An RNA of 177 nucleotides, treated with 2A3 and read out base by base. For 2A3 the reverse transcriptase was SuperScript II with manganese. Conditions: 150 mM KOAc, 10 mM MgCl2 and 150 mM bicine (pH 8.5), 24 C.
[RMDB]
RNA sequence: GGGAACGACUCGAGUAGAGUCGAAAAACCAUUUACGACGUGCAGAGCGGCAAAGUCGUAGCACCCGACGGUGUGGUGUAUUCCGUUGAGGCUUCGACUCAUGCCGGAGCCGACGGAUGGAAGGUGAGUCAGCGUUUCGUUUCGACGAAACGCUGACAAAAGAAACAACAACAACAAC
Reactivity to 2A3 in 0.01 (KOAc 150mM, MgCl2 10mM, bicine 150mM(pH8.5), 24C), signal-to-noise 2, nucleotides 027 to 126: a020c030c000a050u150u100u140a050c000g000a000c050g080u130g020c020a000g050a020g300c060g020g040c010a020a080a000g000u000c000g010u000a020g000c070a060c010c020c000g050a020c130g000g020u160g020u050g230g000u060g000u070a060u030u020c000c040g000u000u040g130a020g000g010c000u000u000c000g000a000c050u040c110a080u190g000c030c000g020g000a000g000c000c000g000a000c000g040g000a040u060g000g020a080a050g090g040u030g040a040